[RMDB]
RNA sequence: GGGAACGACUCGAGUAGAGUCGAAAACAAGGUCCUGUUGGCCGGAGAGCACCAAGUGGGUGUCUGUUGGCAGGAUAAUAUUCUAAUACCCACGCUGACGGCUCGGGAGCACCUGCAGCUGUAUGCACACUAUGGUGGGCUUCGGCCCACCAUAGUGAAAAGAAACAACAACAACAAC
Reactivity to DMS in 0.01 (KOAc 150mM, MgCl2 10mM, bicine 150mM(pH8.5), 24C), signal-to-noise 2, nucleotides 027 to 126: c150a180a160g010g000u000c000c020u000g020u020u020g030g010c000c000g020g010a060g000a080g000c070a140c050c100a240a090g020u010g000g000g010u020g000u000c000u000g000u000u000g000g000c030a020g000g000a080u040a100a080u030a300u000u030c080u000a160a160u000a150c000c000c070a040c120g000c010u010g000a140c040g000g030c080u000c050g010g050g000a160g020c200a040c000c020u000g000c050a050g000c030u000g000u020a070u030g000c040a210
Reactivity to 2A3 in 0.01 (KOAc 150mM, MgCl2 10mM, bicine 150mM(pH8.5), 24C), signal-to-noise 4, nucleotides 027 to 126: c080a080a090g070g030u030c000c010u010g020u050u090g060g040c000c010g020g000a050g010a020g030c010a020c060c020a260a100g250u170g100g080g000u020g000u040c050u020g090u100u050g020g020c020a010g010g010a010u030a080a110u070a130u140u210c150u090a040a080u090a170c000c000c000a030c070g000c020u070g070a040c020g030g010c010u010c000g030g000g000a120g060c040a110c050c010u030g000c080a010g020c020u060g000u090a050u090g000c010a030
About this RNA
Source: RMDB library OK1LIB, as collected in RNAgym. This 177-nucleotide RNA was probed chemically with DMS and 2A3. For DMS, 2,207 sequencing reads were counted. 2A3 adducts were read by reverse transcription with SuperScript II with manganese. DMS adducts were read by reverse transcription with MarathonRT. For 2A3, 2,028 sequencing reads were counted.